[RMDB]
Chemical mapping of a 177-nucleotide RNA with DMS and 2A3. The data come from the RNA Mapping Database (RMDB), library TTRDEL. Reactivities are given for positions 27 through 126. 2A3 adducts were read by reverse transcription with SuperScript II with manganese.
RNA sequence: GGGAACGACUCGAGUAGAGUCGAAAAGAUAUGGACAGUGGACAUGUUCCAAUUCGGAAACGAAUUGAAGAACAACAGCCACGUCCUAAGUCAAACCCACUAAAACGGUUCGCCGUUUUAGUGGGAAGACCUAAACGAUCUUCGGAUCGUUUAGGUCAAAAGAAACAACAACAACAAC
Reactivity to DMS in 0.01 (KOAc 150mM, MgCl2 10mM, bicine 150mM(pH8.5), 24C), signal-to-noise 2, nucleotides 027 to 126: g000a040u010a300u000g000g000a000c000a120g040u000g000g010a090c060a130u000g000u000u000c000c020a000a000u010u000c000g000g000a170a080a110c000g000a000a010u000u000g010a150a200g010a000a000c010a010a120c250a180g000c000c010a000c000g010u020c000c000u010a020a150g000u000c020a070a130a260c010c000c000a010c000u010a000a000a000a010c010g000g010u000u010c300g000c000c010g040u000u000u020u020a000g010u000g000g000g000a000a020
Reactivity to 2A3 in 0.01 (KOAc 150mM, MgCl2 10mM, bicine 150mM(pH8.5), 24C), signal-to-noise 2, nucleotides 027 to 126: g010a020u040a030u070g030g010a040c180a190g030u000g000g000a070c100a260u110g010u010u000c000c010a010a000u000u000c020g040g020a080a070a030c010g010a000a020u040u070g080a160a160g020a030a020c020a010a040c030a110g080c000c010a020c000g000u000c000c000u020a150a000g000u010c000a020a030a140c010c010c000a010c000u000a010a000a000a000c000g000g070u070u090c300g080c170c020g000u000u000u000u000a000g000u010g000g000g010a020a010